[RMDB]
RNA sequence: GGGAACGACUCGAGUAGAGUCGAAAAGCUCUGGAGACUUCCGACCUGUGAGGUCGAGGAUUCCCCGUGGAGGGAGACAGCCACCGGGAUAGGACAGAGAAAUCACCUCCAGAGGACCCCUUCAGCGUAAGGUCCAACUUCGGUUGGACCAAAAGAAACAACAACAACAAC
Reactivity to 2A3 in 0.01 (KOAc 150mM, MgCl2 10mM, bicine 150mM(pH8.5), 24C), signal-to-noise 2, nucleotides 027 to 129: g020c000u000c000u040g010g000a000g020a040c050u050u000c040c040g000a020c010c020u090g070u220g250a160g000g000u000c020g020a060g000g040a020u010u010c000c000c020c000g020u050g030g020a120g000g070g030a070g010a050c010a010g030c000c000a010c020c030g000g000g000a030u070a090g090g070a040c110a060g100a020g060a080a020a030u100c020a080c000c000u000c000c010a000g000a000g010g050a020c000c000c000c000u030u140c040a110g000c050g120u090a100a080
Reactivity to DMS in 0.01 (KOAc 150mM, MgCl2 10mM, bicine 150mM(pH8.5), 24C), signal-to-noise 3, nucleotides 027 to 129: g020c060u030c000u000g030g040a030g040a110c030u000u050c090c060g000a070c020c000u020g050u000g000a000g060g000u010c020g030a100g020g010a060u020u000c020c000c000c060g030u040g060g030a100g070g000g000a110g040a120c090a180g050c000c010a080c010c300g050g000g040a080u000a140g000g000a140c110a090g060a000g000a080a000a080u000c060a230c060c000u000c030c060a000g060a020g030g000a090c040c010c030c060u080u080c000a070g070c210g040u040a180a100

Conditions: 150 mM KOAc, 10 mM MgCl2 and 150 mM bicine (pH 8.5), 24 C. Structure probing data (2A3 and DMS) for a 170-nucleotide construct. DMS adducts were read by reverse transcription with MarathonRT. The 2A3 profile rests on 7,743 reads. The data come from the RNA Mapping Database (RMDB), library 15KLIB.